Overview: An RNA of 177 nucleotides, treated with 2A3 and DMS and read out base by base. The data come from the RNA Mapping Database (RMDB), library RFMREP. For 2A3, 1,845 sequencing reads were counted.

RNA sequence: GGGAACGACUCGAGUAGAGUCGAAAAGGAAGAAAAAAUGGUGAAUAUUCAUUGAUCAAAUCAGUCACUCCACCAAAAUAUGAUGGAUCUUUUGAAUAACUGAUUAAUCAGACGAGAAUAAAGAUAGCUUCGUUAAUAUCUUCGGAUAUUAACGAAGAAAAGAAACAACAACAACAAC
Reactivity to 2A3 in 0.01 (KOAc 150mM, MgCl2 10mM, bicine 150mM(pH8.5), 24C), signal-to-noise 2, nucleotides 027 to 126: g020g010a030a010g000a060a060a040a000a000a040u150g010g040u060g050a080a050u080a060u070u060c060a050u050u020g000a010u020c030a020a090a040u010c020a010g030u020c010a020c090u030c030c010a010c010c020a030a020a040a210u230a090u120g040a010u010g010g000a010u040c000u080u120u100u090g080a090a040u090a080a020c010u000g000a020u040u020a060a040u030c000a000g080a110c040g120a160g040a260a030u110a090a080a000g100a040u080a050g010
Reactivity to DMS in 0.01 (KOAc 150mM, MgCl2 10mM, bicine 150mM(pH8.5), 24C), signal-to-noise 3, nucleotides 027 to 126: g000g010a060a080g000a020a020a030a100a060a070u000g000g020u000g000a090a110u000a060u000u000c080a100u010u000g000a010u010c060a030a070a030u000c000a000g000u000c110a100c290u000c030c020a030c040c020a030a070a080a100u010a060u000g010a030u000g010g000a040u000c040u000u000u020u020g010a120a110u000a060a070c000u010g010a020u000u000a170a020u000c030a010g000a110c190g000a140g010a010a030u000a030a050a070g000a090u010a060g000